[RMDB]
RNA sequence: GGGAACGACUCGAGUAGAGUCGAAAAAGAAUCUCCUUCGGGAGAUUCUGAAGCACUAAGCUGAUUGCGGAUGACGACGAGGCAGCUCGUGUCGAGCAACCACCGAGAACAGGUUCGCCUGUUCUAACAAGUUCCGAAUUUUCGAAUUCGGAACUUGAAAAGAAACAACAACAACAAC
Reactivity to 2A3 in 0.01 (KOAc 150mM, MgCl2 10mM, bicine 150mM(pH8.5), 24C), signal-to-noise 2, nucleotides 027 to 126: a000g000a010a020u000c000u000c010c000u020u060c170g100g010g010a000g000a000u010u010c000u000g000a000a010g000c020a000c150u200a090a030g020c030u030g080a120u010u180g020c020g000g070a120u210g040a050c090g030a010c010g010a040g050g050c090a060g050c080u000c020g010u020g020u030c030g000a020g010c010a010a040c000c020a000c030c060g110a020g010a040a000c000a000g010g000u040u040c050g110c030c000u000g030u020u000c000u010a020a000
Reactivity to DMS in 0.01 (KOAc 150mM, MgCl2 10mM, bicine 150mM(pH8.5), 24C), signal-to-noise 3, nucleotides 027 to 126: a000g000a020a000u000c000u010c000c000u010u010c170g030g020g010a010g010a010u000u000c010u000g010a080a140g010c060a100c120u000a070a120g010c060u010g010a080u000u010g010c010g000g020a140u000g010a060c040g000a040c030g010a050g020g000c300a090g010c000u000c030g020u000g010u000c000g000a190g010c040a020a080c000c010a100c090c080g000a040g000a010a010c000a010g000g000u000u020c230g010c000c000u000g000u000u000c000u000a080a170